[RMDB]
RNA sequence: GGGAACGACUCGAGUAGAGUCGAAAAUCGGACGGCGGCCAUGAGUCGCAACGCAAAGCCGCGGCAAGUGGAGGUAGCGAGAAGAGACUAGGCUUUGGUUUCUUCAAGUGAAGCGGUCACCAAUCAGAAUAGCUUGCGCAGUUCGCUGCGCAAGCAAACAUUCUUAUUGAUUCGUCAAUAAGAAUGUAAAAGAAACAACAACAACAAC
Reactivity to DMS in 0.01 (KOAc 150mM, MgCl2 10mM, bicine 150mM(pH8.5), 24C), signal-to-noise 2, nucleotides 027 to 156: u000c060g000g010a170c010g020g010c030g000g040c000c020a090u010g010a300g020u000c030g030c020a030a040c010g010c060a120a160a240g040c000c020g010c040g030g000c060a060a300g010u000g000g000a120g020g030u000a170g020c040g000a300g010a060a010g020a010g000a030c010u000a100g010g020c150u020u000u010g010g010u060u000u020c020u000u020c010a030a300g010u000g010a140a110g010c030g000g000u000c020a070c010c040a070a120u010c060a180g000a100a130u000a140g020c020u000u010g000c000g000c000a060g000u000u000c300g020c000u000g020c000g000c050a000a000g030c000a000a050
Reactivity to 2A3 in 0.01 (KOAc 150mM, MgCl2 10mM, bicine 150mM(pH8.5), 24C), signal-to-noise 4, nucleotides 027 to 156: u110c020g070g020a010c060g110g020c000g030g000c010c010a120u100g000a020g010u000c000g010c020a030a070c050g030c110a120a130a020g070c070c060g010c010g010g010c050a060a050g020u030g020g020a040g050g040u030a010g010c010g010a030g000a020a000g010a000g000a010c020u030a040g090g240c050u150u190u160g000g010u000u000u000c000u000u010c010a020a010g020u030g030a090a010g020c030g030g010u020c020a020c040c030a030a110u200c030a010g130a160a100u130a060g010c000u000u000g000c020g000c000a020g010u040u120c160g040c110u000g000c000g000c010a000a000g000c000a000a000